RNA sequence: GGGAACGACUCGAGUAGAGUCGAAAAGGAUGACUACGGGAGGCUCUACGAGAAGAGUUACGAGCUACGCGUAUACCACCACCCCGUGGCCACCGGGACGGCGACGCCGAGGCCGAGCCUCGAGGAGACGAUCACCGAUGUUCGCAUCGGUGAUCGUAAAAGAAACAACAACAACAAC
Reactivity to 2A3 in 0.01 (KOAc 150mM, MgCl2 10mM, bicine 150mM(pH8.5), 24C), signal-to-noise 2, nucleotides 027 to 126: g030g020a220u100g010a050c030u050a020c070g060g000g030a090g070g000c010u000c010u130a010c070g040a050g060a300a040g030a010g020u060u080a020c060g020a010g050c040u080a050c060g020c020g090u030a030u050a120c010c090a010c000c030a050c000c040c010c000g000u030g050g000c030c020a070c050c000g020g000g020a020c050g010g040c040g030a030c110g040c020c000g010a050g060g000c080c030g020a040g000c010c010u030c010g050a070g020g010a080g010
Reactivity to DMS in 0.01 (KOAc 150mM, MgCl2 10mM, bicine 150mM(pH8.5), 24C), signal-to-noise 2, nucleotides 027 to 126: g000g000a170u000g040a190c110u000a080c070g000g000g010a300g000g000c020u000c010u000a030c070g000a190g000a110a070g010a220g000u000u010a120c090g000a090g010c020u000a090c100g010c010g020u000a040u000a040c070c030a100c090c050a170c070c010c000c050g020u000g010g000c030c030a070c000c040g010g000g000a210c030g000g020c010g000a110c140g000c040c030g010a060g000g010c050c020g010a040g000c020c010u000c020g030a100g000g000a080g010

The data come from the RNA Mapping Database (RMDB), library OK2TRN. An RNA of 177 nucleotides, treated with 2A3 and DMS and read out base by base. High DMS reactivity at an A or C suggests that its Watson-Crick edge is free. The 2A3 profile rests on 2,363 reads. The RNA was probed in 150 mM KOAc, 10 mM MgCl2 and 150 mM bicine (pH 8.5) at 24 C.